The record gives the reactivity of an RNA of 207 nucleotides to 2A3.
It was measured as part of the RMDB library M2RFOK.
For 2A3 the reverse transcriptase was SuperScript II with manganese.

RNA sequence: GGGAACGACUCGAGUAGAGUCGAAAACCUCACUACAUUUUACUGUUCCUAAAGAAUUUGUGACAGGUACAGUAACACGUAUUGCAAGGUUUAUCAGUUCCUAUAAACAGGUAAAUAACAAUAUAUGAAAAGCAAAGACUGUUCGCAGUCUUUGCAAGAAUUCAAUUUCCUUCGGGAAAUUGAAUUCAAAAGAAACAACAACAACAAC
Reactivity to 2A3 in 0.01 (KOAc 150mM, MgCl2 10mM, bicine 150mM(pH8.5), 24C), signal-to-noise 2, nucleotides 027 to 156: c010c010u050c020a020c020u030a000c000a050u050u070u020u010a010c020u010g010u040u080c020c000u040a120a060a090g110a300a300u170u300u300g120u120g070a050c050a060g010g010u010a000c000a000g010u000a030a000c030a000c020g010u000a000u000u000g060c090a120a020g010g020u010u010u020a150u100c020a020g000u020u000c000c000u030a080u170a110a080a000c040a010g050g100u050a030a050a100u180a140a060c060a100a040u150a030u080a010u300g080a050a090a010a050g010c000a000a000a000g000a010c010u000g000u050u060c180g010c040a000g000u000c000u000u030u000g000c000a000a010